[RMDB]
RNA sequence: GGGAACGACUCGAGUAGAGUCGAAAAAUCGCAAGACCUUCAAAACGAACUAUGCGAGUAGUUCACAGCUAAGUCUGUAUGGAUAUGCUGAAACGCGACGAGAUGGGCUGAUAGAGACAUGAAGAGAAUCACCACGUGGUUUCGACCACGUGGUGAUAAAAGAAACAACAACAACAAC
Reactivity to 2A3 in 0.01 (KOAc 150mM, MgCl2 10mM, bicine 150mM(pH8.5), 24C), signal-to-noise 1, nucleotides 027 to 126: a000u060c000g000c070a130a000g100a110c040c040u080u030c040a070a130a120a030c130g000a010a000c000u020a070u070g080c040g000a040g010u000a010g000u000u000c010a010c010a070g000c000u050a060a140g060u070c040u080g120u170a120u270g100g000a000u030a050u180g000c000u000g000a050a000a040c040g040c000g010a030c000g000a000g000a000u000g030g000g000c000u000g000a070u050a040g060a000g010a010c070a160u090g000a050a000g090a000g040a010
Reactivity to DMS in 0.01 (KOAc 150mM, MgCl2 10mM, bicine 150mM(pH8.5), 24C), signal-to-noise 2, nucleotides 027 to 126: a100u020c020g040c130a140a040g060a120c050c030u000u000c240a030a020a120a190c250g000a000a000c000u000a000u040g040c300g020a070g000u000a020g070u000u000c000a190c000a000g000c060u000a090a030g000u000c000u000g040u010a010u040g010g000a010u000a300u000g000c030u010g030a060a010a020c200g010c030g030a020c080g000a060g000a090u000g000g000g000c040u090g030a030u000a030g000a130g010a030c050a020u000g010a070a000g000a040g010a060